Source: RMDB library OK2TST, as collected in RNAgym. This 177-nucleotide RNA was probed chemically with 2A3 and DMS. The 2A3 profile rests on 952 reads. For 2A3 the reverse transcriptase was SuperScript II with manganese. For DMS the reverse transcriptase was MarathonRT. High 2A3 reactivity points to a flexible backbone, as in loops and unpaired stretches.
[RMDB]
RNA sequence: GGGAACGACUCGAGUAGAGUCGAAAAGCUUCGACCAUGGGAUCAACUCUCUUACAGCCCCGUAAAUCGGUACUAAAGCUGCUAACGUUACACCAAUGGCGCCACUGGUCAUUGCCAUAAAUAGUGACGUCAUAGGCAUGUUCGCAUGCCUAUGACGAAAAGAAACAACAACAACAAC
Reactivity to 2A3 in 0.01 (KOAc 150mM, MgCl2 10mM, bicine 150mM(pH8.5), 24C), signal-to-noise 1, nucleotides 027 to 126: g010c020u120u100c050g040a050c000c000a070u060g000g050g030a030u110c030a070a070c030u040c000u020c000u060u050a100c070a010g110c020c000c000c000g030u050a070a000a070u240c000g040g060u080a040c030u160a130a130a030g050c020u040g030c030u060a050a000c040g020u010u030a040c040a070c030c030a050a040u090g000g000c000g000c110c020a080c050u030g000g060u000c030a090u040u250g030c020c000a090u160a080a150a040u140a040g140u110g040a050
Reactivity to DMS in 0.01 (KOAc 150mM, MgCl2 10mM, bicine 150mM(pH8.5), 24C), signal-to-noise 1, nucleotides 027 to 126: g010c020u000u000c110g030a050c010c030a060u020g000g010g000a080u000c060a100a130c160u000c110u000c050u030u000a170c040a090g010c040c060c000c060g050u000a070a090a060u010c040g020g000u000a050c160u010a080a170a060g000c020u000g020c070u000a060a020c060g000u000u000a040c080a080c060c070a080a070u000g000g010c010g000c000c030a060c050u010g020g000u000c100a080u040u000g000c040c020a100u000a010a060a080u000a060g020u020g000a100